The record gives the reactivity of an RNA of 207 nucleotides to 2A3.
The reactions ran in a buffer of 150 mM KOAc, 10 mM MgCl2 and 150 mM bicine (pH 8.5), at 24 C.
It was measured as part of the RMDB library OK3TST.
For 2A3 the reverse transcriptase was SuperScript II with manganese.
[RMDB]
RNA sequence: GGGAACGACUCGAGUAGAGUCGAAAAAUGAACUAGAAAAUACCAUUUUUCACAAAGACUGAAGUGGAGCUUUGAAUCAGCUCAACCUUAGCAGGAUUAAUGUGAUCUGUCCUUCACCACCUGCCAAAAGCAAAAGUAAAUCUUUGGAGGAAGAUAACCAUACUCCCCGAUUCGUCGGGGAGUAUGGAAAAGAAACAACAACAACAAC
Reactivity to 2A3 in 0.01 (KOAc 150mM, MgCl2 10mM, bicine 150mM(pH8.5), 24C), signal-to-noise 1, nucleotides 027 to 156: a030u070g060a030a000c070u050a120g080a030a130a060a060u110a080c040c030a130u150u010u070u100u020c060a020c000a000a080a100g030a020c050u140g060a020a000g040u020g060g020a000g000c010u080u010u120g150a120a110u300c050a020g000c000u010c000a000a050c050c000u070u100a010g000c000a000g020g080a050u140u190a060a020u230g030u010g000a000u010c000u020g180u090c000c030u010u020c000a020c010c040a030c000c000u020g000c000c050a000a000a000a110g060c030a080a110a000a060g050u080a000a100a170u010c010u000u090u100g040g020a010g100g000a010a050g010a000u040a070a030